Annotation: An RNA of 177 nucleotides, treated with DMS and 2A3 and read out base by base.

RNA sequence: GGGAACGACUCGAGUAGAGUCGAAAACUGGCUCACCGAAGAUGGCCUGGCCGUCCGCGUCACCGUAGAGGCCGAACGCAUCGGCAAUGACACAUUGGGCAUGCGCGUGCUGAUCGACCAGCCGGACUCUUUCGGUGAGGUUCGCCUCACCGAAAGAAAAAGAAACAACAACAACAAC
Reactivity to DMS in 0.01 (KOAc 150mM, MgCl2 10mM, bicine 150mM(pH8.5), 24C), signal-to-noise 2, nucleotides 027 to 126: c070u020g030g050c040u000c000a100c020c040g030a060a080g000a150u000g010g020c120c010u000g010g010c000c050g010u000c090c070g020c040g010u010c040a080c160c040g010u000a080g000a230g010g000c000c050g000a030a140c110g020c140a120u000c040g040g020c010a070a040u000g000a220c100a100c100a080u000u000g000g000g020c060a150u010g000c030g020c040g000u000g010c030u010g010a070u010c040g020a060c010c030a110g000c030c000g000g020a070c120
Reactivity to 2A3 in 0.01 (KOAc 150mM, MgCl2 10mM, bicine 150mM(pH8.5), 24C), signal-to-noise 2, nucleotides 027 to 126: c020u040g050g030c000u020c020a050c010c000g070a060a040g040a080u080g010g030c070c040u000g060g050c020c020g020u060c040c030g020c020g000u020c070a080c050c010g040u040a020g020a030g130g000c040c000g020a080a030c050g020c080a090u060c040g040g030c010a030a160u120g040a050c070a000c030a230u070u120g060g010g050c070a010u120g000c050g000c000g000u110g030c020u060g020a110u080c040g030a040c030c010a010g020c030c000g070g000a020c020

Background
2A3 adducts were read by reverse transcription with SuperScript II with manganese. For 2A3, 1,445 sequencing reads were counted.